[RMDB]
RNA sequence: GGGAACGACUCGAGUAGAGUCGAAAACGAGGCCCGGGUUACCGCUACCGAGGCAUCGGUAAUGGCCUGCUCGUAGCGCAGCCGAACGCCGCCCGGCUCGGCUUGGGCUAUGAACGCGGUGGCGGCCGAAUCUGCGAUCCUUCGGGAUCGCAGAUUCAAAAGAAACAACAACAACAAC
Reactivity to 2A3 in 0.01 (KOAc 150mM, MgCl2 10mM, bicine 150mM(pH8.5), 24C), signal-to-noise 2, nucleotides 027 to 126: c060g050a070g090g000c010c010c000g000g030g000u160u090a100c030c020g050c000u010a000c000c000g010a060g080g010c050a050u130c060g040g020u160a180a150u210g160g000c010c000u020g000c000u000c050g070u070a000g030c210g030c120a000g000c000c010g020a170a020c090g010c010c000g100c060c090c060g000g000c000u030c010g060g000c110u080u270g040g030g000c000u000a030u070g010a080a070c020g000c010g160g010u010g000g000c000g000g000c030c010